[RMDB]
The data come from the RNA Mapping Database (RMDB), library M2RFPK. The record gives the reactivity of an RNA of 207 nucleotides to DMS and 2A3.
RNA sequence: GGGAACGACUCGAGUAGAGUCGAAAAACGGAUGGUAUGCCAUCCGACCAUUGGGUAGAAGCGUUCAAUCAGCACCGUGACGGUGCAGAUGGGAAAUUGCCCAUGAUACGCACCAUACGUGGUGCGAAAAAGCCAUCGGUGUUCGCACCGAUGGCAAGAACAUUUUAUACUUCGGUAUAAAAUGUUCAAAAGAAACAACAACAACAAC
Reactivity to DMS in 0.01 (KOAc 150mM, MgCl2 10mM, bicine 150mM(pH8.5), 24C), signal-to-noise 2, nucleotides 027 to 156: a070c030g010g010a010u000g030g030u000a080u000g020c010c010a020u000c010c020g010a030c020c040a120u010u010g020g000g010u000a040g020a120a120g000c080g020u000u000c020a050a050u000c000a110g000c010a020c000c000g020u000g000a190c170g000g070u000g010c020a010g000a030u000g010g000g000a010a180a120u000u000g000c000c030c000a010u010g000a160u000a090c000g010c020a020c010c010a150u000a070c200g010u010g010g000u000g040c000g010a000a010a050a130a110g000c060c060a020u000c010g000g000u000g010u000u010c270g060c010a000c000c010g000a000u000g010g000c000a090a020
Reactivity to 2A3 in 0.01 (KOAc 150mM, MgCl2 10mM, bicine 150mM(pH8.5), 24C), signal-to-noise 5, nucleotides 027 to 156: a000c010g000g010a000u010g010g040u240a090u290g220c010c000a000u000c000c000g000a010c000c000a090u060u090g010g010g010u030a030g030a150a040g040c060g050u070u070c040a030a060u010c020a020g000c010a010c010c020g130u230g240a140c250g010g000u000g000c010a010g000a000u010g000g010g010a010a090a080u050u020g010c000c000c000a000u040g030a010u040a030c010g000c010a010c000c000a020u030a080c260g100u050g020g000u000g000c000g000a040a010a000a010a000g000c010c000a000u000c010g000g000u030g040u060u090c170g040c080a010c000c000g000a000u000g000g000c000a000a000

Reactivities are rounded to 0.1 and cut off at 0 and 3. The reactions ran in a buffer of 150 mM KOAc, 10 mM MgCl2 and 150 mM bicine (pH 8.5), at 24 C. For DMS, 4,299 sequencing reads were counted. DMS adducts were read by reverse transcription with MarathonRT.